This 177-nucleotide RNA was probed chemically with DMS and 2A3. For 2A3 the reverse transcriptase was SuperScript II with manganese. Reactivities are rounded to 0.1 and cut off at 0 and 3. For DMS, 1,048 sequencing reads were counted. It was measured as part of the RMDB library OK2TST.

RNA sequence: GGGAACGACUCGAGUAGAGUCGAAAACAUUUGAUGCUUCUUACGGUGUUGAAAGUUGUGUAAUGUCUUUCAUUACAAACCGUCCAGCUAAUGAGCCAGGUUUCUACUUAGAUCGUACAGAAGGCGCGGUAUGAACGGCAUUCGUGCCGUUCAUACCAAAAGAAACAACAACAACAAC
Reactivity to DMS in 0.01 (KOAc 150mM, MgCl2 10mM, bicine 150mM(pH8.5), 24C), signal-to-noise 1, nucleotides 027 to 126: c040a110u020u010u000g000a120u000g000c020u000u010c020u000u000a070c050g020g040u000g000u000u000g020a060a120a030g000u000u000g000u020g020u010a030a040u000g000u000c300u000u000u010c020a010u000u000a040c030a040a070a040c030c060g000u010c230c130a090g000c020u010a100a110u000g000a120g000c060c030a150g010g020u000u000u000c130u020a040c020u010u000a130g000a030u000c040g040u010a050c250a020g000a060a030g020g030c050g010c100
Reactivity to 2A3 in 0.01 (KOAc 150mM, MgCl2 10mM, bicine 150mM(pH8.5), 24C), signal-to-noise 2, nucleotides 027 to 126: c000a010u120u010u290g130a100u190g050c020u010u080c000u020u010a000c030g070g000u030g040u050u190g070a150a040a050g050u050u080g100u030g000u110a020a040u010g090u070c110u000u150u130c010a000u000u000a010c000a000a090a000c000c000g010u000c050c000a080g000c040u150a300a150u140g080a040g010c020c050a030g010g020u000u100u100c070u020a000c000u030u040a040g010a070u090c010g040u020a020c040a110g010a050a010g110g070c060g030c040